[RMDB]
RNA sequence: GGGAACGACUCGAGUAGAGUCGAAAACUAGGAGGACUGCCGCUGCUAAAGCGGAGGAAGGAACGGGCAACGGUAGGUCAGUAUGCCCCGAAUGGACCGGGCAACACGCGGGCUACAAUGGCUCUGACUAUAGCAGGAUGUUCGCAUCCUGCUAUAGAAAAGAAACAACAACAACAAC
Reactivity to 2A3 in 0.01 (KOAc 150mM, MgCl2 10mM, bicine 150mM(pH8.5), 24C), signal-to-noise 6, nucleotides 027 to 126: c040u050a040g040g060a030g010g050a020c020u040g020c010c000g020c020u040g020c080u240a220a020a000g010c000g010g020a010g000g010a020a030g010g000a070a040c050g010g000g030c010a020a020c020g060g000u040a030g040g130u060c010a010g030u040a090u100g020c010c000c010c010g050a070a120u170g040g030a020c040c000g020g000g000c020a050a040c020a030c060g050c070g000g000g000c000u030a030c050a060a160u120g070g000c010u010c010u020g020a030
Reactivity to DMS in 0.01 (KOAc 150mM, MgCl2 10mM, bicine 150mM(pH8.5), 24C), signal-to-noise 6, nucleotides 027 to 126: c060u010a060g020g030a090g000g000a030c020u010g010c010c000g010c000u010g020c240u030a050a090a030g020c020g000g000a040g000g000a080a060g000g000a120a110c110g010g000g000c020a080a090c180g000g000u010a050g010g010u000c030a070g010u020a070u000g000c030c010c020c060g000a110a110u020g000g010a080c110c090g020g000g000c020a050a050c120a070c090g010c080g000g000g000c010u000a040c070a060a070u010g000g010c040u000c010u000g010a270